[RMDB]
RNA sequence: GGGAACGACUCGAGUAGAGUCGAAAAUCGCCCGGGGAGCGGAGGGGGGCCGCAGUGAAGAGGCCCAAGCGACUGUUUACCAAAAACACAGGACUCUGCAUAAGCCGCGAGGCGACGUAUAGGGUCUUACAAUUAGAUUUUUCGAAAUCUAAUUGUAAAAAGAAACAACAACAACAAC
Reactivity to DMS in 0.01 (KOAc 150mM, MgCl2 10mM, bicine 150mM(pH8.5), 24C), signal-to-noise 7, nucleotides 027 to 126: u010c060g000c010c010c020g000g000g010g000a110g030c050g010g010a080g000g010g010g010g000g010c020c010g010c110a100g020u020g010a100a120g010a120g000g010c020c010c030a100a070g010c110g010a100c080u010g000u010u000u010a120c100c120a040a070a080a060a070c130a070c120a110g010g000a040c010u000c010u000g020c050a070u010a130a200g010c000c010g000c200g000a160g010g000c000g010a030c170g010u000a050u000a060g010g000g000u000c010u010
Reactivity to 2A3 in 0.01 (KOAc 150mM, MgCl2 10mM, bicine 150mM(pH8.5), 24C), signal-to-noise 9, nucleotides 027 to 126: u040c010g020c000c000c000g020g020g000g010a060g010c030g010g020a040g020g030g000g000g010g000c010c010g020c030a060g050u100g210a120a070g040a070g060g000c000c000c000a020a010g050c020g070a060c020u030g050u040u060u110a150c050c030a090a070a030a040a010c060a010c010a020g030g020a040c010u010c000u020g000c010a040u070a180a060g040c010c010g090c020g050a110g010g000c010g020a030c040g020u050a070u100a130g030g000g010u000c000u010